RNA sequence: GGGAACGACUCGAGUAGAGUCGAAAAUUUAUAAGCAAUCUUGUUGCUAACCAGGACGCUUGGAUUGGUGACAUCUCUGACGCUGAUGCACUUGUGUUUUAUCGUGAAUAUAUCGGACGCUUAAAGCAAAUUAAGUUUAAGUUUGAAGAAGAUAUUCACUCCUAACACUUUUCGAAGUGUUAGGAGUAAAAGAAACAACAACAACAAC
Reactivity to 2A3 in 0.01 (KOAc 150mM, MgCl2 10mM, bicine 150mM(pH8.5), 24C), signal-to-noise 2, nucleotides 027 to 156: u090u060u000a240u070a170a000g040c010a090a110u090c030u060u140g080u040u090g060c010u010a020a040c040c000a050g030g010a040c090g050c180u130u060g030g020a100u140u000g050g000u030g010a040c020a060u030c080u000c040u070g020a030c030g020c090u020g020a030u060g040c020a030c030u060u010g040u020g020u040u080u030u090a140u190c020g010u010g050a010a000u020a000u000a000u000c000g000g020a000c000g010c020u030u000a040a020a000g080c060a060a160a300u200u120a110a030g020u010u050u020a000a020g000u000u090u170g010a040a030g000a010a010g010a040u060a010u090u090c070
Reactivity to DMS in 0.01 (KOAc 150mM, MgCl2 10mM, bicine 150mM(pH8.5), 24C), signal-to-noise 2, nucleotides 027 to 156: u000u010u010a100u000a160a160g030c060a150a070u010c080u000u000g020u000u000g000c040u010a140a140c080c080a140g000g030a080c050g040c060u020u000g050g010a120u010u000g000g000u000g000a100c040a010u010c010u000c030u010g020a130c090g010c090u000g000a090u000g010c020a050c080u020u000g060u000g020u000u000u000u020a120u000c080g040u000g030a030a020u010a060u000a120u010c010g030g020a230c300g020c000u000u000a020a030a080g000c130a110a110a140u010u000a070a080g000u000u020u010a030a090g010u000u000u010g040a210a190g010a080a170g000a040u000a040u000u000c020